[RMDB]
RNA sequence: GGGAACGACUCGAGUAGAGUCGAAAAAUCCAGCCUGGAUGAAAUCCGUGAUGGCCUGGAGCAACUGCUUCCGGACAUGACCCUGGAACAGUACGCGGAUGCGAUGGCGCAGGCCCUGGCCGCUGCGAGAUGCCAGACUAUUCGUAGUCUGGCAUCUAAAAGAAACAACAACAACAAC
Reactivity to 2A3 in 0.01 (KOAc 150mM, MgCl2 10mM, bicine 150mM(pH8.5), 24C), signal-to-noise 1, nucleotides 027 to 126: a000u000c000c000a020g090c050c020u100g010g040a070u110g120a230a140a090u020c020c000g020u060g030a200u160g030g000c000c070u030g030g000a070g020c060a050a300c070u130g040c030u060u020c010c010g000g000a020c010a120u160g080a090c030c000c050u040g010g010a010a040c020a010g030u070a050c080g000c070g060g090a010u100g050c020g110a100u180g130g000c050g010c050a030g060g000c020c000c000u000g040g000c000c010g040c030u030g060c030g080
Reactivity to DMS in 0.01 (KOAc 150mM, MgCl2 10mM, bicine 150mM(pH8.5), 24C), signal-to-noise 2, nucleotides 027 to 126: a060u000c030c000a040g000c070c040u000g020g000a070u010g020a100a090a300u000c030c010g010u000g020a050u010g030g000c050c040u020g010g010a110g020c020a250a070c120u000g000c110u020u010c010c050g010g010a060c050a090u000g000a120c190c070c020u000g000g000a060a070c040a040g000u000a170c090g010c020g000g000a060u000g010c050g000a100u010g020g030c060g010c080a040g000g020c000c030c090u000g000g010c050c050g010c030u010g000c090g010

The record gives the reactivity of an RNA of 177 nucleotides to 2A3 and DMS. It was measured as part of the RMDB library OK2TRN. The RNA was probed in 150 mM KOAc, 10 mM MgCl2 and 150 mM bicine (pH 8.5) at 24 C. For DMS, 1,401 sequencing reads were counted. For 2A3, 1,200 sequencing reads were counted. 2A3 adducts were read by reverse transcription with SuperScript II with manganese. Reactivities are given for positions 27 through 126. DMS adducts were read by reverse transcription with MarathonRT.